[RMDB]
RNA sequence: GGGAACGACUCGAGUAGAGUCGAAAAUGGGAACCUGAGUCAGGCAGAUCACUUGCGGUCAGGAGUUUGAGACCACCCUGGCCAACAUGCCAAAACCCUGUCCCUGCCAAAAAUAGAAAAAUCAGCCAGGUGUGGUGCUGUGCACCUGUAAUCCCAACCUGAGUACUAUAUUCGUAUAGUACUCAGGAAAAGAAACAACAACAACAAC
Reactivity to DMS in 0.01 (KOAc 150mM, MgCl2 10mM, bicine 150mM(pH8.5), 24C), signal-to-noise 4, nucleotides 027 to 156: u010g000g020g030a060a070c050c040u000g010a100g020u010c030a300g040g010c000a050g010a180u000c070a070c080u000u000g030c170g010g010u000c000a030g000g000a090g000u000u000u000g020a260g010a050c120c020a080c010c000c010u010g020g010c000c010a030a060c040a120u000g030c000c020a060a080a070a070c020c020c020u010g020u000c010c020c020u000g010c030c050a060a050a080a130a140u000a100g010a010a050a040a090a100u010c060a060g000c060c000a020g010g020u000g040u000g000g020u020g040c040u000g010u000g020c040a040c020c000u000g030u010a050a100u000c000c010c010a040a300
Reactivity to 2A3 in 0.01 (KOAc 150mM, MgCl2 10mM, bicine 150mM(pH8.5), 24C), signal-to-noise 5, nucleotides 027 to 156: u050g000g000g020a020a050c030c050u060g020a060g060u100c100a060g010g030c010a010g030a120u160c050a090c190u110u160g030c060g040g010u000c010a000g000g030a160g030u060u130u200g130a090g020a030c030c010a020c020c010c000u000g000g010c010c000a020a020c030a070u050g010c020c000a000a090a070a100c010c000c000u010g030u020c000c000c000u030g030c010c010a010a130a040a050a040u170a070g150a030a090a030a010a040u100c030a020g070c060c010a000g000g000u020g020u020g030g050u060g030c060u110g050u080g010c010a000c000c000u000g010u040a030a060u020c000c010c000a000a040
An RNA of 207 nucleotides, treated with DMS and 2A3 and read out base by base. Source: RMDB library OK3TST, as collected in RNAgym. The DMS profile rests on 8,769 reads.